The record gives the reactivity of an RNA of 177 nucleotides to DMS. For DMS the reverse transcriptase was MarathonRT. The RNA was probed in 150 mM KOAc, 10 mM MgCl2 and 150 mM bicine (pH 8.5) at 24 C. The DMS profile rests on 549 reads.

RNA sequence: GGGAACGACUCGAGUAGAGUCGAAAAAACGAGCCGAGCAGGUACAGCGCGAUGAACCCGACCAGCACGCCCCACGCCACCGGCGUGAACCGCGGCGCCAACCCGAACAAUCCCACGGUCACCGCCGACCGACUAAUAGCUUCGGCUAUUAGUCGGUAAAAGAAACAACAACAACAAC
Reactivity to DMS in 0.01 (KOAc 150mM, MgCl2 10mM, bicine 150mM(pH8.5), 24C), signal-to-noise 1, nucleotides 027 to 126: a030a090c070g010a130g080c030c000g000a130g010c050a060g000g020u000a050c030a110g000c020g040c110g020a090u020g000a050a070c040c010c040g030a090c060c080a110g000c070a050c050g000c030c040c110c030a120c040g060c000c020a130c270c110g010g000c000g080u000g020a040a050c130c160g010c030g000g000c020g010c030c040a070a130c050c030c020g010a030a020c120a070a080u030c000c000c020a130c090g000g000u000c050a080c110c030g040c000c090g000